[RMDB]
The data come from the RNA Mapping Database (RMDB), library OK1LIB. Structure probing data (2A3 and DMS) for a 177-nucleotide construct. The 2A3 profile rests on 349 reads. The reactions ran in a buffer of 150 mM KOAc, 10 mM MgCl2 and 150 mM bicine (pH 8.5), at 24 C.
RNA sequence: GGGAACGACUCGAGUAGAGUCGAAAAGCAAAUUAUCGAUGAGUGGGGCGAGCACCAAAUGAAAACUGGUGACUUAAUUGUUUAUACAAGUGCAGACCCAGUAUUGCAAAUUGCUGCACAUGAAGACAUCAUCGAGCCUGUUCGCAGGCUCGAUGAUAAAAGAAACAACAACAACAAC
Reactivity to 2A3 in 0.01 (KOAc 150mM, MgCl2 10mM, bicine 150mM(pH8.5), 24C), signal-to-noise 1, nucleotides 027 to 126: g020c200a180a070a120u240u270a140u270c080g030a010u250g060a290g000u000g000g000g050g110c000g000a000g020c000a000c060c140a050a050a050u300g000a000a080a000a000c000u130g050g060u080g000a000c000u000u140a000a210u040u020g130u040u000u050a020u000a080c030a040a020g000u000g020c000a000g000a000c000c000c000a000g060u060a140u200u170g100c000a030a030a030u070u190g020c000u000g000c000a000c050a000u100g060a030a100g000a040c000
Reactivity to DMS in 0.01 (KOAc 150mM, MgCl2 10mM, bicine 150mM(pH8.5), 24C), signal-to-noise 1, nucleotides 027 to 126: g020c080a010a060a210u000u070a060u010c000g000a120u080g000a160g100u000g000g030g030g010c210g000a070g030c000a000c000c000a000a290a000u000g000a100a130a120a050c230u000g000g000u000g000a100c050u010u000a100a300u000u000g000u000u000u000a180u070a160c000a120a040g070u000g080c050a080g000a040c000c020c000a000g080u040a140u040u000g000c130a080a100a050u000u000g000c040u000g000c000a000c080a120u000g000a120a090g000a000c030